[RMDB]
RNA sequence: GGGAACGACUCGAGUAGAGUCGAAAAGAUAUGGACACAGCAUCGAUCUAUUCAUCGGAAACGAUGACGGUAGGGAGCUGGUCCUAAGUCAAAGUGUAACGACGGUGUUCGCACCGUCGUUACACAAGAACCCUAGUAACUUCGGUUACUAGGGUUCAAAAGAAACAACAACAACAAC
Reactivity to DMS in 0.01 (KOAc 150mM, MgCl2 10mM, bicine 150mM(pH8.5), 24C), signal-to-noise 2, nucleotides 027 to 126: g000a030u000a300u000g000g010a020c010a090c010a020g020c010a090u000c120g000a100u010c000u010a040u010u020c000a000u000c020g010g000a100a080a240c010g020a010u000g000a020c300g000g000u010a020g000g030g050a040g040c000u000g000g000u000c020c000u000a030a090g000u010c040a060a070a120g030u030g000u000a000a020c010g010a010c020g090g030u000g010u000u010c280g000c000a010c000c000g000u020c000g000u000u000a000c000a010c000a060a140
Description
This 177-nucleotide RNA was probed chemically with DMS. Conditions: 150 mM KOAc, 10 mM MgCl2 and 150 mM bicine (pH 8.5), 24 C. Source: RMDB library TTRDEL, as collected in RNAgym. Reactivities are given for positions 27 through 126.